[RMDB]
RNA sequence: GGGAACGACUCGAGUAGAGUCGAAAACACCUUCGAUGUUUGAAUUGAGGGCAUUGAACAUAGACAUAAUAAGCUUUAUCUAGAAUCUGUGUUGAGGUUCUAACUCCUUAAAGUGCCUUUACGGACCGAGUGUGGACAGAUUCGUCUGUCCACACUCAAAAGAAACAACAACAACAAC
Reactivity to DMS in 0.01 (KOAc 150mM, MgCl2 10mM, bicine 150mM(pH8.5), 24C), signal-to-noise 1, nucleotides 027 to 126: c190a150c070c010u000u010c020g010a030u020g000u000u010u000g020a100a110u000u000g000a050g010g010g020c040a100u020u000g010a050a060c080a140u000a020g000a060c120a040u000a050a220u000a070a070g000c180u010u000u000a050u020c130u000a050g020a090a050u000c020u010g000u000g030u030u000g030a080g000g000u000u000c050u010a050a100c140u000c160c070u000u000a020a070a200g000u010g000c040c000u010u000u000a110c100g000g020a050c150c150
Reactivity to 2A3 in 0.01 (KOAc 150mM, MgCl2 10mM, bicine 150mM(pH8.5), 24C), signal-to-noise 1, nucleotides 027 to 126: c030a010c010c000u020u120c060g060a080u030g060u090u090u190g180a180a090u070u060g020a050g000g020g000c010a040u010u090g030a020a000c010a050u030a050g080a010c050a060u170a160a020u080a300a120g030c010u000u000u170a090u110c100u080a060g040a060a030u010c010u050g000u010g050u100u080g000a020g000g060u000u000c040u060a020a100c090u020c000c030u080u060a080a050a060g010u010g050c000c030u040u020u060a040c070g060g050a000c050c030

An RNA of 177 nucleotides, treated with DMS and 2A3 and read out base by base.
The 2A3 profile rests on 864 reads.
Source: RMDB library OK2TST, as collected in RNAgym.
2A3 adducts were read by reverse transcription with SuperScript II with manganese.